An RNA of 207 nucleotides, treated with 2A3 and read out base by base. The RNA was probed in 150 mM KOAc, 10 mM MgCl2 and 150 mM bicine (pH 8.5) at 24 C. It was measured as part of the RMDB library OK3TST. Values cover nucleotides 27 to 156.
[RMDB]
RNA sequence: GGGAACGACUCGAGUAGAGUCGAAAAACAGCCUGAGGCCUAUGGAAAGGGAAUGAGGUAGUCUUCUUAUCUGUGAGGGAAUCUGAAACUUCAGUGAGUCCUUAGUCACCUAAGAAGGGUUGUCUUUUGGGAGGAACGAGGGCAACCUUACAGGUAAGGUACUCCAGCUAUUCGUAGCUGGAGUACCAAAAGAAACAACAACAACAAC
Reactivity to 2A3 in 0.01 (KOAc 150mM, MgCl2 10mM, bicine 150mM(pH8.5), 24C), signal-to-noise 3, nucleotides 027 to 156: a000c010a010g000c000c010u040g010a020g010g060c020c050u110a120u120g040g030a070a050a040g000g000g030a070a100u090g010a000g050g020u040a040g040u020c060u080u000c020u030u060a040u040c030u040g020u020g000a010g000g070g030a020a060u060c030u030g030a160a140a250c130u140u040c020a000g000u020g120a010g030u020c000c000u000u030a040g060u050c010a020c040c000u040a100a060g070a040a080g090g000g080u140u080g090u130c000u050u070u090u100g050g000g000a110g040g050a160a020c020g000a000g000g030g000c010a000a030c000c000u000u020a010c000a000g000g000u010a030a070